RNA sequence: GGGAACGACUCGAGUAGAGUCGAAAAUUCAUGCCAAAGUAUAACCAAAUGCCGACGGCUAAUGGUUCAAAUUUAAAUCAACCGCCAUUGAUUAGCGAAACUUAUCAGGCCGAAGCGCAGCAGCAUAAUUAUCAUUUAUGUUCGCAUAAAUGAUAAUAAAAGAAACAACAACAACAAC
Reactivity to 2A3 in 0.01 (KOAc 150mM, MgCl2 10mM, bicine 150mM(pH8.5), 24C), signal-to-noise 5, nucleotides 027 to 126: u030u010c010a010u100g040c010c020a070a040a030g120u100a140u040a190a040c020c010a050a060a050u060g010c010c010g120a120c100g030g000c000u030a040a040u050g000g000u000u020c010a060a060a080u070u170u230a070a080a040u060c020a020a030c030c040g040c030c020a040u040u060g020a020u060u010a020g010c030g060a070a010a020c020u070u070a050u120c020a010g040g000c010c000g030a030a010g030c020g000c050a030g020c010a010g000c010a030u080a130
Reactivity to DMS in 0.01 (KOAc 150mM, MgCl2 10mM, bicine 150mM(pH8.5), 24C), signal-to-noise 8, nucleotides 027 to 126: u010u000c080a050u010g020c020c030a070a090a120g010u010a080u010a070a140c040c050a050a090a140u000g000c010c010g020a200c180g020g020c020u000a110a120u000g010g000u000u000c140a060a110a130u010u000u010a060a060a070u010c050a040a070c070c070g010c090c050a110u010u000g010a040u000u000a070g020c070g000a070a040a080c050u000u000a040u000c090a070g010g010c010c020g010a110a130g010c170g020c050a040g000c050a040g000c060a060u000a060